Chemical mapping of a 207-nucleotide RNA with 2A3. The reactions ran in a buffer of 150 mM KOAc, 10 mM MgCl2 and 150 mM bicine (pH 8.5), at 24 C. For 2A3, 708 sequencing reads were counted.
RNA sequence: GGGAACGACUCGAGUAGAGUCGAAAACGGUGUAUCCGCAGCGCGCCCUGUCCCGCCAUAUACAUUCCGUGCUUUUCAAACACCCGCCGUGGGCUAAGCAUGGGACCCACGUGGGGCGGGGACACACGGCGAUAAAGAGCCAGGCCCUCGCUGCCAAAUUACGGAUAGCUUUCGAGCUAUCCGUAAUAAAAGAAACAACAACAACAAC
Reactivity to 2A3 in 0.01 (KOAc 150mM, MgCl2 10mM, bicine 150mM(pH8.5), 24C), signal-to-noise 1, nucleotides 027 to 156: c050g060g000u070g030u120a110u100c100c100g010c000a020g000c030g020c000g000c000c000c000u000g030u030c000c000c000g000c010c050a090u190a030u060a200c060a060u120u000c000c000g020u000g000c040u050u050u060u190c140a170a100a070c090a150c030c000c060g120c070c080g170u200g010g000g000c010u030a000a000g010c000a000u000g000g000g000a000c020c020c020a110c070g030u100g030g010g000g010c030g030g000g000g030a000c030a000c010a000c000g000g050c000g000a000u120a130a130a050g070a010g020c030c010a020g000g000c020c000c010u040c010g010c010u030g000c000c030a090a210